[RMDB]
Conditions: 150 mM KOAc, 10 mM MgCl2 and 150 mM bicine (pH 8.5), 24 C. This 177-nucleotide RNA was probed chemically with DMS. Values cover nucleotides 27 to 126. For DMS the reverse transcriptase was MarathonRT. It was measured as part of the RMDB library 15KREP.
RNA sequence: GGGAACGACUCGAGUAGAGUCGAAAAUGGAGCGUCGGGCCCCAGCAGUCCGUGGAAUUCACCCUCUUACCGCUUCUCCACACUCCUUCCCCCCUGCGGGCUCCCCCCAUAAGAUGACGAGGACCCCCUCAUAUGUGUACUUCGGUACACAUAUGAGAAAAGAAACAACAACAACAAC
Reactivity to DMS in 0.01 (KOAc 150mM, MgCl2 10mM, bicine 150mM(pH8.5), 24C), signal-to-noise 1, nucleotides 027 to 126: u010g000g020a040g040c080g030u000c090g030g010g010c040c010c030c120a080g010c080a060g030u000c080c070g040u000g000g030a050a070u000u020c100a100c000c010c020u010c030u000u000a070c130c000g000c040u000u010c030u000c000c040a050c090a140c040u010c020c020u000u000c030c020c030c050c030c040u010g020c050g030g020g010c020u000c000c010c000c010c000c020a130u010a040a090g010a120u000g000a020c030g000a050g000g000a240c030c000c010c030